Record summary: Conditions: 150 mM KOAc, 10 mM MgCl2 and 150 mM bicine (pH 8.5), 24 C. Structure probing data (DMS and 2A3) for a 177-nucleotide construct. High 2A3 reactivity points to a flexible backbone, as in loops and unpaired stretches. The DMS profile rests on 2,693 reads. Source: RMDB library M2PK50, as collected in RNAgym.
RNA sequence: GGGAACGACUCGAGUAGAGUCGAAAACAGACCAAGUUCGCUUGGUCUGAAAGAAAGCGGAAAGCACCAGGGAGGGAAGGUGCGGGCCGGAACCACCCAUAAAAAGUACGAUCUUCGGAUCGUACAACCAUGGUUUAGUGUUCGCACUAAACCAUGGAAAAGAAACAACAACAACAAC
Reactivity to DMS in 0.01 (KOAc 150mM, MgCl2 10mM, bicine 150mM(pH8.5), 24C), signal-to-noise 3, nucleotides 027 to 126: c010a010g000a010c010c000a000a010g010u020u010c180g030c010u010u000g010g010u010c000u020g000a040a080a080g010a060a110a070g000c040g010g000a080a050a130g030c000a030c020c020a120g000g030g010a100g010g000g010a120a190g000g030u000g000c020g010g000g000c020c020g000g000a070a070c120c090a130c000c000c020a120u040a080a030a060a120a090g000u000a010c010g000a000u000c000u000u020c170g020g020a010u000c000g010u000a010c010a040a070
Reactivity to 2A3 in 0.01 (KOAc 150mM, MgCl2 10mM, bicine 150mM(pH8.5), 24C), signal-to-noise 6, nucleotides 027 to 126: c010a000g000a010c010c000a000a000g010u030u070c120g010c150u000u000g000g000u000c000u000g000a000a020a010g060a020a060a000g070c020g020g030a080a050a000g000c000a010c010c010a050g050g070g080a160g050g050g020a060a060g040g010u030g000c000g000g040g010c020c010g010g010a020a010c030c020a050c000c010c000a020u180a060a130a010a010a000g000u000a000c000g000a000u000c010u030u060c200g050g000a000u010c000g000u000a000c010a000a000